[RMDB]
RNA sequence: GGGAACGACUCGAGUAGAGUCGAAAAAAGUAAGCAGUUGAUUUUUGUGAUAACCGUCAAAUCGACCACUUAGGGUCACCACUUAACGCUGUCCACAAACGGCCUGGCGACCACUUAAGGCUGUAAAGUUGAGGUAUUACUUCGGUAAUACCUCAACAAAAGAAACAACAACAACAAC
Reactivity to DMS in 0.01 (KOAc 150mM, MgCl2 10mM, bicine 150mM(pH8.5), 24C), signal-to-noise 2, nucleotides 027 to 126: a070a050g010u010a050a090g000c080a070g050u050u000g010a080u020u000u000u010u000g010u020g010a130u000a070a080c140c140g050u000c080a030a080a070u000c050g000a070c020c020a080c080u000u000a110g020g040g000u000c060a040c080c010a060c160u020u010a040a040c100g010c050u040g000u000c000c050a020c150a040a060a130c050g020g010c010c010u000g030g010c050g030a120c040c040a080c060u000u010a090a090g010g000c030u000g000u010a120a040a100
Reactivity to 2A3 in 0.01 (KOAc 150mM, MgCl2 10mM, bicine 150mM(pH8.5), 24C), signal-to-noise 1, nucleotides 027 to 126: a010a000g130u100a040a000g000c030a030g010u070u080g080a090u030u130u100u140u050g110u060g030a120u060a150a110c000c060g010u010c030a020a010a150u100c000g010a000c000c030a030c060u050u070a090g050g070g000u010c010a030c020c000a040c000u050u060a100a000c100g070c030u040g040u030c020c040a050c040a060a100a000c020g000g000c000c010u030g000g000c010g060a020c040c030a070c040u070u050a010a000g010g020c030u030g070u070a000a130a100